[RMDB]
Source: RMDB library OK3TST, as collected in RNAgym.
An RNA of 207 nucleotides, treated with 2A3 and read out base by base.
The RNA was probed in 150 mM KOAc, 10 mM MgCl2 and 150 mM bicine (pH 8.5) at 24 C.

RNA sequence: GGGAACGACUCGAGUAGAGUCGAAAAGACGCUGACGAGGCGGGAAAUACGGAGUCGCGCGAUUGGAUUCAUUUCUGCGCAAAUGAGCUGCGGAAGGCAUCGGGGCUGCCAACGGAGGAUUGACGGGUUGGGCCCGCAGGCGACGGGGCUUGCGGGUAGAUAUACUUAGCUUCGGCUAAGUAUAUCUAAAAGAAACAACAACAACAAC
Reactivity to 2A3 in 0.01 (KOAc 150mM, MgCl2 10mM, bicine 150mM(pH8.5), 24C), signal-to-noise 2, nucleotides 027 to 156: g050a010c030g010c050u060g010a020c040g020a050g020g040c070g000g000g000a030a120a020u210a040c050g060g000a030g070u070c040g020c010g000c020g130a080u050u140g050g010a030u090u100c040a070u080u060u030c090u190g040c020g010c050a010a040a120u170g030a040g080c070u090g000c050g040g030a020a030g010g010c020a000u080c070g010g010g000g000c050u050g020c010c010a070a000c030g050g020a020g020g020a030u030u090g020a030c050g010g040g030u020u040g020g010g000c000c000c000g000c000a000g000g020c000g060a070c090g010g020g020g020c000u000u000g000c000g000g010g000u000